RNA sequence: GGGAACGACUCGAGUAGAGUCGAAAACAGACUCGAGCGAAAGCUCGGCGAAAGCCGCGUACAUGUGAGAGUCGGCUUGUGUACAGUCGACAGUUACUCUUCGGAGUAACAAUAGAAACAACAACAACAUCAGCAUCGGUUUCGACCGAUGCUGAUGAAAAGAAACAACAACAACAAC
Reactivity to 2A3 in 0.01 (KOAc 150mM, MgCl2 10mM, bicine 150mM(pH8.5), 24C), signal-to-noise 2, nucleotides 027 to 126: c100a000g030a070c000u000c060g040a010g030c000g100a140a000a000g000c000u000c000g000g000c000g030a080a070a010g000c000c010g030c000g000u040a040c040a130u170g060u080g090a080g030a010g070u030c020g000g000c030u230u220g080u000g060u080a020c050a060g000u000c000g000a000c020a020g010u000u000a000c000u000c000u000u100c200g060g000a000g010u010a000a000c000a000a030u160a070g050a000a180a000c030a000a010c030a020a030c060a000a050
Reactivity to DMS in 0.01 (KOAc 150mM, MgCl2 10mM, bicine 150mM(pH8.5), 24C), signal-to-noise 2, nucleotides 027 to 126: c080a150g000a090c000u000c020g000a210g000c000g000a180a120a250g000c000u000c110g000g010c010g000a120a130a060g000c040c030g000c100g000u040a060c160a090u020g000u020g000a270g000a000g010u050c000g010g020c090u000u010g000u000g010u000a060c300a030g020u000c000g020a070c300a060g000u000u000a000c000u020c000u000u130c140g000g030a010g000u000a000a000c000a010a050u090a060g010a090a080a040c060a000a060c080a070a050c300a050a130